The record gives the reactivity of an RNA of 177 nucleotides to DMS and 2A3. DMS adducts were read by reverse transcription with MarathonRT. The reactions ran in a buffer of 150 mM KOAc, 10 mM MgCl2 and 150 mM bicine (pH 8.5), at 24 C. Reactivities are rounded to 0.1 and cut off at 0 and 3.

RNA sequence: GGGAACGACUCGAGUAGAGUCGAAAAUUUGACGAGGAGCGAGCGGCGAUUCUGUGCAACCUGGCAGAAUUAGUCGUGCGCGAGCUGGAGGCGGCGUGGGCCGCCCAGUACCAGAGGCGGCACUCGCAAUCAAUAUGGCGUUCGCGCCAUAUUGAUUAAAAGAAACAACAACAACAAC
Reactivity to DMS in 0.01 (KOAc 150mM, MgCl2 10mM, bicine 150mM(pH8.5), 24C), signal-to-noise 4, nucleotides 027 to 126: u000u010u010g010a100c080g020a090g010g010a230g020c000g000a150g020c010g020g010c010g000a010u000u000c010u000g010u010g010c070a100a110c200c130u010g000g020c000a030g000a020a010u000u000a070g050u000c010g020u000g010c010g000c010g010a130g020c040u000g010g000a090g010g010c110g010g010c010g020u000g000g000g020c000c010g010c000c010c030a040g010u010a140c170c120a100g000a120g010g000c020g010g000c010a030c020u000c010g000c080
Reactivity to 2A3 in 0.01 (KOAc 150mM, MgCl2 10mM, bicine 150mM(pH8.5), 24C), signal-to-noise 2, nucleotides 027 to 126: u090u040u120g080a040c020g030a020g060g020a060g020c040g000a020g000c000g020g020c000g020a000u000u020c000u000g020u040g190c020a130a190c070c080u080g090g000c010a000g020a010a020u020u040a110g010u030c010g000u020g000c020g010c000g000a020g000c020u030g030g000a030g020g060c120g020g010c040g020u070g030g050g000c000c000g000c000c000c000a010g030u070a140c010c070a040g030a120g080g010c020g000g000c000a000c020u000c010g000c020